Structure probing data (DMS and 2A3) for a 177-nucleotide construct. For DMS, 51,549 sequencing reads were counted. The reactions ran in a buffer of 150 mM KOAc, 10 mM MgCl2 and 150 mM bicine (pH 8.5), at 24 C. High 2A3 reactivity points to a flexible backbone, as in loops and unpaired stretches. For 2A3, 16,611 sequencing reads were counted. Values cover nucleotides 27 to 126.

RNA sequence: GGGAACGACUCGAGUAGAGUCGAAAAAGGCGCAGUAAAGAGAGUUAAAGACAAGUGGGUCGGAGUGCAAGUGCAAGGCGUGAAAUGGUUAGCUAAAUCAGUGCACUACAUGAUACCAGAGCUAACGUCAUAUGGUUCUAUUCGUAGAACCAUAUGAAAAAGAAACAACAACAACAAC
Reactivity to DMS in 0.01 (KOAc 150mM, MgCl2 10mM, bicine 150mM(pH8.5), 24C), signal-to-noise 9, nucleotides 027 to 126: a070g000g010c030g020c030a040g010u010a050a070a060g000a090g000a080g010u010u010a070a070a100g010a060c090a060a080g020u020g010g000g010u010c060g000g000a070g020u000g010c060a060a060g010u010g000c040a050a080g000g020c130g000u010g010a040a070a080u030g010g000u000u000a030g000c020u010a040a080a060u010c040a050g010u010g020c100a060c070u010a060c090a050u010g000a060u010a100c100c090a100g000a050g000c010u000a010a030c070g010
Reactivity to 2A3 in 0.01 (KOAc 150mM, MgCl2 10mM, bicine 150mM(pH8.5), 24C), signal-to-noise 9, nucleotides 027 to 126: a000g050g000c030g010c030a020g030u110a020a140a000g090a010g010a010g020u060u180a110a090a010g050a050c050a070a100g020u080g020g040g000u060c040g010g020a040g020u070g020c030a070a030g010u020g040c020a050a060g070g010c060g040u110g050a060a040a070u120g030g000u050u010a010g010c010u060a070a100a060u070c020a020g030u010g060c040a010c070u120a040c040a100u090g010a020u060a100c030c060a040g000a000g120c000u020a040a010c000g030